[RMDB]
RNA sequence: GGGAACGACUCGAGUAGAGUCGAAAAGCACAGUUCGCUGUGCAGGUAUCCUAAGUCCAAGUUAUCCUGGGAGUCCGAUAAGUAUCGGAAACGAUACUUUUGACGGACGAAGAACAGGAUGGGCUUGGAUAUGGAGAGCGGGACCGUUCGCGGUCAAUCUGUUAAUGGACUUCGGUCCAUUAACAGAAAAAGAAACAACAACAACAAC
Reactivity to 2A3 in 0.01 (KOAc 150mM, MgCl2 10mM, bicine 150mM(pH8.5), 24C), signal-to-noise 3, nucleotides 027 to 156: g000c000a000c000a000g010u160u220c220g060c170u010g000u010g000c000a010g070g080u090a040u090c010c010u010a060a060g030u000c000c000a000a010g000u020u010a020u010c010c000u020g000g000g020a050g010u000c010c000g010a050u020a050a000g010u000a000u010c010g030g000a070a000a000c010g000a000u000a010c000u030u010u030u150g220a080c010g000g010a010c020g010a060a010g000a010a020c000a000g010g000a010u010g030g030g000c000u000u000g000g000a010u000a010u040g030g000a040g010a020g080c110g030g100g020a020c030c000g040u100u120c230g020c020g100g000u010c010a010a090
Reactivity to DMS in 0.01 (KOAc 150mM, MgCl2 10mM, bicine 150mM(pH8.5), 24C), signal-to-noise 1, nucleotides 027 to 156: g010c010a010c010a020g030u010u000c220g050c010u000g030u000g000c030a020g020g000u010a110u010c010c000u000a080a290g000u000c000c000a000a060g040u000u000a100u000c040c010u000g000g000g000a260g010u000c010c000g030a130u010a040a010g050u000a000u000c010g050g050a150a040a190c000g020a020u000a010c010u000u000u020u040g010a160c060g040g000a040c000g010a030a070g010a100a290c000a010g000g020a040u010g000g020g000c000u000u000g000g030a070u000a100u000g000g020a030g020a110g050c060g000g030g010a070c040c020g060u000u010c200g020c030g000g000u000c000a050a050
This 207-nucleotide RNA was probed chemically with 2A3 and DMS. The 2A3 profile rests on 3,414 reads. The RNA was probed in 150 mM KOAc, 10 mM MgCl2 and 150 mM bicine (pH 8.5) at 24 C. DMS (dimethyl sulfate) methylates the pairing face of unpaired adenines and cytosines.